[RMDB]
This 177-nucleotide RNA was probed chemically with DMS. DMS adducts were read by reverse transcription with MarathonRT. It was measured as part of the RMDB library OK2TST. Reactivities are rounded to 0.1 and cut off at 0 and 3. Conditions: 150 mM KOAc, 10 mM MgCl2 and 150 mM bicine (pH 8.5), 24 C.

RNA sequence: GGGAACGACUCGAGUAGAGUCGAAAAAGGAUAAUGGGUAAUGAAAGCCAGCUGAUGGGUACAUAUCUAGGCAUUCUUGAAUACAGUACAUAGCACAUUGCACAUUUCCUGCAAGUAUUAUUUAGGGCCUAGUAGGUGACUUCGGUCACCUACUAGGAAAAGAAACAACAACAACAAC
Reactivity to DMS in 0.01 (KOAc 150mM, MgCl2 10mM, bicine 150mM(pH8.5), 24C), signal-to-noise 2, nucleotides 027 to 126: a040g000g030a040u000a020a020u000g000g010g020u000a060a010u000g010a160a080a150g000c070c140a080g020c040u000g010a100u010g020g000g040u010a050c050a120u000a060u000c040u000a070g000g010c270a060u010u000c020u000u000g040a130a070u000a030c110a100g020u020a020c040a060u030a050g020c050a150c040a040u000u000g020c000a020c000a030u000u000u000c030c010u000g010c120a060a060g000u010a070u000u020a150u000u020u000a100g010g000g000